RNA sequence: GGGAACGACUCGAGUAGAGUCGAAAAACCUACAUACAUUGUAUGUAGACCCUAAGUAUCAAGUCAUUGUCUUAAAAGACAAUGUACUUUCUUCUAUGCUUAGAUUGCACACCGUUGAGUCAGGUGAAUACUCGCCGCUUCGGCGGCGAGAAAAGAAACAACAACAACAAC
Reactivity to 2A3 in 0.01 (KOAc 150mM, MgCl2 10mM, bicine 150mM(pH8.5), 24C), signal-to-noise 3, nucleotides 027 to 129: a000c000c030u000a000c010a000u000a010c060a070u000u300g000u000a000u000g000u030a040g060a080c030c000c000u000a060a020g000u010a040u160c120a030a000g020u010c000a030u000u010g060u000c050u110u190a060a050a000a000g000a010c010a000a000u000g000u010a000c020u020u010u000c020u090u000c000u040a030u000g000c000u060u000a000g010a120u080u170g060c060a000c000a000c020c000g040u020u070g030a040g210u100c050a050g000g000u010g050a000a000u030a080
Reactivity to DMS in 0.01 (KOAc 150mM, MgCl2 10mM, bicine 150mM(pH8.5), 24C), signal-to-noise 4, nucleotides 027 to 129: a100c290c000u040a060c000a030u020a060c040a080u030u140g060u000a000u010g020u010a040g020a010c050c040c000u010a000a000g040u060a020u000c170a120a040g030u020c000a000u000u000g010u020c000u050u120a060a080a160a090g010a040c000a000a000u040g030u020a020c020u040u000u040c130u050u000c080u000a060u010g020c000u000u010a020g020a130u020u010g000c000a120c040a030c040c010g000u030u070g000a140g020u050c070a000g000g010u050g030a040a090u000a080
The record gives the reactivity of an RNA of 170 nucleotides to 2A3 and DMS. Reactivities are given for positions 27 through 129. It was measured as part of the RMDB library 15KLIB. Conditions: 150 mM KOAc, 10 mM MgCl2 and 150 mM bicine (pH 8.5), 24 C. High 2A3 reactivity points to a flexible backbone, as in loops and unpaired stretches. For DMS, 4,993 sequencing reads were counted.